[RMDB]
RNA sequence: GGGAACGACUCGAGUAGAGUCGAAAAUUACCGCCCAGGAUGGGGUGCAGCGUUCCUGCAAUAUCCAGGGCAACUAGGUGCAGCCUUGUAGUUUUAGUGGACUUUAGGCUAAAGAAUUUCACUAGCAAAAAUCUUUAAGGGUUCGCCCUUAAAGAAACAUGGUUGCAAUGUUCGCAUUGCAACCAUGAAAAGAAACAACAACAACAAC
Reactivity to 2A3 in 0.01 (KOAc 150mM, MgCl2 10mM, bicine 150mM(pH8.5), 24C), signal-to-noise 1, nucleotides 027 to 156: u040u000a100c020c000g000c010c010c000a030g000g010a020u000g050g040g000g130u100g000c010a010g010c010g100u120u120c060c010u000g010c000a030a020u060a020u090c010c010a010g000g020g010c030a070a040c030u080a020g080g000u060g020c050a000g020c000c010u070u070g070u120a070g010u010u000u030u070a020g040u010g000g000a000c010u030u050u040a040g000g000c010u040a080a080a110g060a010a040u050u140u190c040a030c020u020a020g000c010a010a130a240a170a190u010c000u000u000u000a010a010g000g000g020u010u040c110g100c000c000c020u000u000a000a000a000g000a010a000a010
This 207-nucleotide RNA was probed chemically with 2A3.
The data come from the RNA Mapping Database (RMDB), library M2RFPK.
The reactions ran in a buffer of 150 mM KOAc, 10 mM MgCl2 and 150 mM bicine (pH 8.5), at 24 C.
Values cover nucleotides 27 to 156.